Chemical mapping of a 177-nucleotide RNA with DMS and 2A3. The data come from the RNA Mapping Database (RMDB), library RFMREP. For 2A3 the reverse transcriptase was SuperScript II with manganese. DMS adducts were read by reverse transcription with MarathonRT. The 2A3 profile rests on 1,419 reads. The reactions ran in a buffer of 150 mM KOAc, 10 mM MgCl2 and 150 mM bicine (pH 8.5), at 24 C.

[RMDB]
RNA sequence: GGGAACGACUCGAGUAGAGUCGAAAAUAACGUGUAGUAUUGUUUUAUUCAAUCAUUCAGAAUUGGUAAAUGCAGAAGCAGCAAAAUAACCAAAAGUAAUGACUUUCGUUUUAAUUUCUUAAGAUGAUCUUCUAAAUAUCUUCGGAUAUUUAGAAGAAAAAGAAACAACAACAACAAC
Reactivity to DMS in 0.01 (KOAc 150mM, MgCl2 10mM, bicine 150mM(pH8.5), 24C), signal-to-noise 3, nucleotides 027 to 126: u000a090a060c070g040u000g000u000a040g000u010a110u010u000g010u000u000u010u000a120u010u010c060a090a090u010c020a010u000u000c080a170g020a110a180u010u000g000g000u010a080a130a110u000g020c000a090g010a100a080g030c200a050g000c030a010a020a050a100u010a060a070c020c020a010a020a080a130g010u000a030a030u000g000a020c130u000u010u000c050g000u000u010u010u000a040a100u010u000u000c060u000u010a050a110g010a110u000g000a130
Reactivity to 2A3 in 0.01 (KOAc 150mM, MgCl2 10mM, bicine 150mM(pH8.5), 24C), signal-to-noise 2, nucleotides 027 to 126: u100a060a000c030g010u030g030u070a090g040u040a110u060u070g090u060u090u060u030a170u040u060c050a010a040u040c030a000u090u020c000a050g030a190a220u050u030g000g000u040a020a010a050u070g000c010a000g040a300a090g050c100a000g000c020a060a030a050a140u090a020a030c000c000a020a040a000a000g070u080a000a080u030g000a020c000u040u110u020c010g030u000u120u000u070a120a160u040u160u030c040u030u020a050a010g000a040u100g010a030